[RMDB]
RNA sequence: GGGAACGACUCGAGUAGAGUCGAAAACAGAACUGGAUGGGCCGUGUGCUUAACCAGGACAUGAUCUCCUUCUCUCCAACGUUGUUGCCAACUCAUGAUUCUCCUAACCUGUGCUUGGAGAGACGUGCUACCAUAUAGGUGUUCGCACCUAUAUGAACCAUAAGGACUUGUUCGCAAGUCCUUAUGGAAAAGAAACAACAACAACAAC
Reactivity to 2A3 in 0.01 (KOAc 150mM, MgCl2 10mM, bicine 150mM(pH8.5), 24C), signal-to-noise 2, nucleotides 027 to 156: c020a010g040a080a050c000u010g020g020a060u050g060g030g000c060c090g300u230g150u300g050c020u040u070a060a070c010c010a020g000g050a050c060a050u100g040a120u030c000u000c010c000u120u030c000u000c000u000c010c020a050a090c130g000u010u040g010u000u030g030c060c070a070a030c020u050c030a050u050g100a280u180u030c030u050c050c070u090a080a100c030c050u130g070u160g090c070u030u030g000g000a000g000a000g000a010c000g020u030g040c040u050a110c060c000a010u010a000u000a010g000g010u000g010u080u030c150g030c060a000c000c010u000a000u000a010u010g000a010a060
Reactivity to DMS in 0.01 (KOAc 150mM, MgCl2 10mM, bicine 150mM(pH8.5), 24C), signal-to-noise 2, nucleotides 027 to 156: c050a060g020a120a160c010u000g000g020a180u010g000g010g000c030c040g010u030g010u010g010c020u000u020a070a160c050c060a060g000g000a110c060a090u010g010a070u010c010u020c020c040u010u000c030u000c020u010c030c010a060a060c100g030u000u020g000u000u000g000c030c040a070a140c040u010c010a100u010g020a170u000u000c030u000c020c040u010a050a050c040c080u000g020u000g020c050u000u020g010g020a070g000a000g020a070c030g030u000g000c060u000a230c090c000a030u000a020u010a010g040g030u000g010u000u010c300g030c020a050c000c010u000a010u000a010u000g010a050a110